An RNA of 177 nucleotides, treated with DMS and read out base by base. It was measured as part of the RMDB library OK2TST. The RNA was probed in 150 mM KOAc, 10 mM MgCl2 and 150 mM bicine (pH 8.5) at 24 C. For DMS the reverse transcriptase was MarathonRT.

RNA sequence: GGGAACGACUCGAGUAGAGUCGAAAAAUUGCAUUGCUGGAAGAACUGCGCACAUGUCAAGGGUGCGUCCUGAUUGAGCUAGUGGAAAUCGCCUCCAGGCCCUGUUGUGUACUUAUCUGGCUGACUCAGUGCGUGGAUAUUUCGAUAUCCACGCACUAAAAGAAACAACAACAACAAC
Reactivity to DMS in 0.01 (KOAc 150mM, MgCl2 10mM, bicine 150mM(pH8.5), 24C), signal-to-noise 2, nucleotides 027 to 126: a030u010u000g020c100a120u020u000g020c020u000g010g000a100a130g020a090a100c110u010g020c050g010c030a020c060a050u010g000u010c150a110a120g000g010g020u010g020c100g010u000c110c030u000g000a110u010u000g010a050g000c060u020a080g000u000g000g020a060a100a090u010c100g020c040c020u000c010c030a090g000g000c020c020c030u000g040u000u000g010u000g010u000a070c030u000u010a070u020c030u000g010g020c030u000g010a070c170u000c110